An RNA of 177 nucleotides, treated with 2A3 and DMS and read out base by base. The 2A3 profile rests on 2,781 reads.
[RMDB]
RNA sequence: GGGAACGACUCGAGUAGAGUCGAAAAUCCACCUUGGGGUGCCCUAUUCGGAGCACUGCAGUUCCCGAUAGAAAGGCUAAGCACUUCGCAAUGAAGUAAGGUGGGACUUUUCCUUCGGGAACCAAGCGUGUAUACUGUACUUCGGUACAGUAUACACAAAAGAAACAACAACAACAAC
Reactivity to 2A3 in 0.01 (KOAc 150mM, MgCl2 10mM, bicine 150mM(pH8.5), 24C), signal-to-noise 3, nucleotides 027 to 126: u000c010c020a050c040c020u130u080g050g060g000g080u030g020c000c020c010u140a270u100u210c170g040g010a100g030c000a020c030u100g020c020a000g010u000u000c030c000c000g000a000u000a020g020a000a030a000g040g000c060u100a030a020g050c010a010c040u000u010c020g040c170a190a300u300g020a010a050g030u070a020a090g140g040u100g000g050g050a090c000u030u040u020u020c010c010u020u030c010g020g000g000a010a000c000c020a020a020g060c030
Reactivity to DMS in 0.01 (KOAc 150mM, MgCl2 10mM, bicine 150mM(pH8.5), 24C), signal-to-noise 2, nucleotides 027 to 126: u000c010c010a100c170c080u010u000g010g010g050g020u000g010c000c010c000u000a170u000u010c180g040g010a090g000c020a000c020u000g020c090a300g000u000u010c000c010c020g010a020u000a120g000a010a020a010g000g000c010u010a120a220g020c050a050c000u000u000c000g010c160a090a130u000g000a040a030g010u030a080a090g010g000u000g020g010g020a120c010u000u000u000u000c000c040u000u000c010g010g000g000a000a010c010c040a020a130g000c140